An RNA of 177 nucleotides, treated with DMS and 2A3 and read out base by base. It was measured as part of the RMDB library OK2TST. For 2A3, 944 sequencing reads were counted.
RNA sequence: GGGAACGACUCGAGUAGAGUCGAAAACGAUAUCGAUGAUAUCGCCUUCGCGCACCAGACCGAUCGUGCCGCCUUCGGCUGCUUCCGGCGAAACAUGGCCGAUGGAAAGGCCCGAUGAACCGCCCGACGUCAUUAGCCGAUUCGUCGGCUAAUGACGAAAAGAAACAACAACAACAAC
Reactivity to DMS in 0.01 (KOAc 150mM, MgCl2 10mM, bicine 150mM(pH8.5), 24C), signal-to-noise 1, nucleotides 027 to 126: c050g000a020u000a010u000c000g010a280u010g000a040u000a010u000c030g000c020c030u010u000c030g020c100g010c020a120c040c060a140g000a100c040c050g000a060u000c010g000u000g020c020c020g030c010c030u000u000c010g010g010c010u000g000c070u000u000c100c050g000g030c120g000a060a040a060c100a090u000g000g030c000c000g010a090u000g000g000a070a070a170g010g000c000c030c080g000a060u000g010a040a120c090c050g010c000c090c040g010a170
Reactivity to 2A3 in 0.01 (KOAc 150mM, MgCl2 10mM, bicine 150mM(pH8.5), 24C), signal-to-noise 1, nucleotides 027 to 126: c000g010a010u020a020u060c140g130a170u260g010a030u150a010u030c010g030c030c000u040u050c090g030c030g010c030a090c040c120a030g080a070c040c000g080a070u020c010g080u020g000c020c000g100c000c000u080u080c000g080g000c040u040g030c040u080u110c070c070g140g020c040g030a060a060a060c030a050u180g030g060c030c000g000a070u030g020g050a180a300a170g030g000c000c050c020g020a040u000g010a040a010c030c010g020c000c000c050g040a040